Description
Source: RMDB library OK2TST, as collected in RNAgym. An RNA of 177 nucleotides, treated with DMS and 2A3 and read out base by base. The DMS profile rests on 2,715 reads. For 2A3, 1,501 sequencing reads were counted. The RNA was probed in 150 mM KOAc, 10 mM MgCl2 and 150 mM bicine (pH 8.5) at 24 C. 2A3 adducts were read by reverse transcription with SuperScript II with manganese.
[RMDB]
RNA sequence: GGGAACGACUCGAGUAGAGUCGAAAAUGGCAACGUUUGCUAGUUGGUAAAUGCCAUCAGUACAGCGAUCAUUGCGGAACAGCAUAAAACUGUCAGUCGCUUGGUUUAAGCGUUCUAAACCUUUAGCUAGUAUUAGCCCAUUCGUGGGCUAAUACUAAAAAGAAACAACAACAACAAC
Reactivity to DMS in 0.01 (KOAc 150mM, MgCl2 10mM, bicine 150mM(pH8.5), 24C), signal-to-noise 3, nucleotides 027 to 126: u020g010g040c010a050a080c230g030u000u000u000g020c000u000a070g020u000u010g010g000u010a040a080a170u010g000c010c010a010u000c040a120g030u020a060c070a030g010c020g010a080u000c080a070u000u000g020c030g010g030a070a080c120a080g000c030a070u010a080a090a140a060c030u000g000u010c100a150g020u000c020g020c020u000u000g010g010u000u000u000a030a060g000c030g000u000u000c080u000a060a060a060c050c000u000u010u000a060g010c120
Reactivity to 2A3 in 0.01 (KOAc 150mM, MgCl2 10mM, bicine 150mM(pH8.5), 24C), signal-to-noise 2, nucleotides 027 to 126: u050g050g040c040a010a060c110g050u050u090u040g020c010u040a090g110u060u090g020g000u090a160a200a070u180g030c040c010a030u020c010a010g040u100a020c020a070g000c000g010a020u070c010a070u030u110g010c050g030g030a140a010c010a020g000c040a040u090a120a100a000a010c000u010g050u100c010a020g020u020c000g050c020u030u030g000g160u080u060u190a020a000g010c010g050u020u030c030u030a070a110a140c020c000u010u150u120a030g020c050